About this RNA:
This 177-nucleotide RNA was probed chemically with 2A3 and DMS. The reactions ran in a buffer of 150 mM KOAc, 10 mM MgCl2 and 150 mM bicine (pH 8.5), at 24 C. For DMS the reverse transcriptase was MarathonRT. For DMS, 70,672 sequencing reads were counted.

RNA sequence: GGGAACGACUCGAGUAGAGUCGAAAACAUGCAGGCGUCUGGUGCUAGGCGUACAGCACCAGGGUCAGCACUGCGUGCUGAGGCGGCGCAAGCGUCGCUGUCACGCCCGGCGAUUGGCUUACACGACCCAUGAGGCGAUCUUCGGGUUGCCUCGUGGAAAAGAAACAACAACAACAAC
Reactivity to 2A3 in 0.01 (KOAc 150mM, MgCl2 10mM, bicine 150mM(pH8.5), 24C), signal-to-noise 9, nucleotides 027 to 126: c010a010u040g000c010a000g000g000c000g010u000c000u000g000g000u000g000c000u020a050g080g030c050g100u120a040c040a020g000c000a000c000c000a000g010g000g030u100c010a010g000c030a030c010u050g010c020g000u010g000c030u050g020a020g010g000c000g000g000c000g000c030a080a060g070c010g020u020c000g000c000u010g130u040c010a010c030g020c000c000c000g020g020c040g100a190u050u100g050g010c010u030u060a030c050a010c040g100a110c010
Reactivity to DMS in 0.01 (KOAc 150mM, MgCl2 10mM, bicine 150mM(pH8.5), 24C), signal-to-noise 9, nucleotides 027 to 126: c030a030u000g010c010a060g000g000c000g000u010c000u000g000g010u000g000c000u000a160g010g020c100g010u020a090c090a030g000c000a010c000c000a000g000g000g000u040c010a080g000c010a080c020u010g000c060g020u000g000c090u000g010a220g000g000c010g010g000c010g010c090a140a130g010c030g030u000c010g000c000u000g000u010c060a070c120g000c010c010c010g010g010c090g000a080u010u010g000g000c050u000u000a080c100a080c090g010a150c140